[RMDB]
RNA sequence: GGGAACGACUCGAGUAGAGUCGAAAAGGUGUGUAUCGCACGGCUCGAUCAGUGGGAGAAGGCUCAGGUCGAUUGCUCUAUUGGUUUGGUCUGUGUCCUGGUUGCGCGCUGAGAGUAAAACCAAUGGCUAAAUAUUUUAUUUCGAUAAAAUAUUUAGAAAAGAAACAACAACAACAAC
Reactivity to DMS in 0.01 (KOAc 150mM, MgCl2 10mM, bicine 150mM(pH8.5), 24C), signal-to-noise 6, nucleotides 027 to 126: g010g020u000g010u010g020u010a050u030c070g000c030a050c040g010g000c010u010c030g000a090u010c050a050g020u020g010g000g010a100g010a140a060g010g000c010u010c030a040g000g010u010c020g000a070u030u020g010c080u010c130u020a070u020u010g000g000u010u010u010g000g000u010c010u010g000u000g000u030c010c020u010g010g000u010u020g010c070g000c040g010c010u000g010a070g000a090g010u020a050a040a080a110c030c030a050a070u020g010g010
Reactivity to 2A3 in 0.01 (KOAc 150mM, MgCl2 10mM, bicine 150mM(pH8.5), 24C), signal-to-noise 5, nucleotides 027 to 126: g060g000u020g000u000g020u060a090u180c060g010c020a000c010g030g010c010u030c030g060a130u020c010a020g030u040g020g050g020a120g030a060a000g020g000c010u000c030a010g000g040u000c010g040a090u000u140g020c020u010c020u090a100u040u110g020g010u020u020u050g010g010u000c010u020g020u000g040u100c000c010u040g040g020u100u100g030c040g000c000g000c010u020g010a020g000a000g030u070a010a060a010a010c010c010a020a040u070g050g000